[RMDB]
RNA sequence: GGGAACGACUCGAGUAGAGUCGAAAAGAUAUGGAGACCAGUACUUUUGACGGCUAGUUCGGAAACGAAGGCCGAUAAGUACGGUCUCCUAAGUCAAAAUCGUAUGUCCCUUCGGGGACAUACGAAAGUUCAUACCUAGCUUCGGCUAGGUAUGAACAAAAGAAACAACAACAACAAC
Reactivity to DMS in 0.01 (KOAc 150mM, MgCl2 10mM, bicine 150mM(pH8.5), 24C), signal-to-noise 1, nucleotides 027 to 126: g000a020u000a190u000g000g000a030g000a040c000c030a140g020u000a020c010u000u030u020u000g000a220c010g000g020c000u000a130g000u000u000c010g010g010a050a060a070c000g000a020a050g000g000c030c000g030a040u000a020a020g030u000a000c000g000g000u000c000u000c000c000u000a000a040g000u000c010a060a120a050a190u000c000g010u000a000u000g000u010c000c000c000u000u030c190g020g010g020g000a000c000a000u000a000c000g000a000a010a050
Reactivity to 2A3 in 0.01 (KOAc 150mM, MgCl2 10mM, bicine 150mM(pH8.5), 24C), signal-to-noise 2, nucleotides 027 to 126: g010a030u060a010u120g000g000a020g000a020c000c100a130g000u000a010c010u140u230u300u300g190a100c000g000g050c010u030a080g300u080u020c010g040g000a060a000a010c010g000a030a000g040g000c000c000g020a040u070a130a020g000u010a000c010g010g000u000c000u040c000c000u010a020a000g000u010c030a000a000a000a260u020c000g000u000a000u010g010u000c030c010c010u010u030c210g000g010g010g000a000c000a010u000a000c000g000a000a000a000
The record gives the reactivity of an RNA of 177 nucleotides to DMS and 2A3.
The DMS profile rests on 1,297 reads.
For 2A3 the reverse transcriptase was SuperScript II with manganese.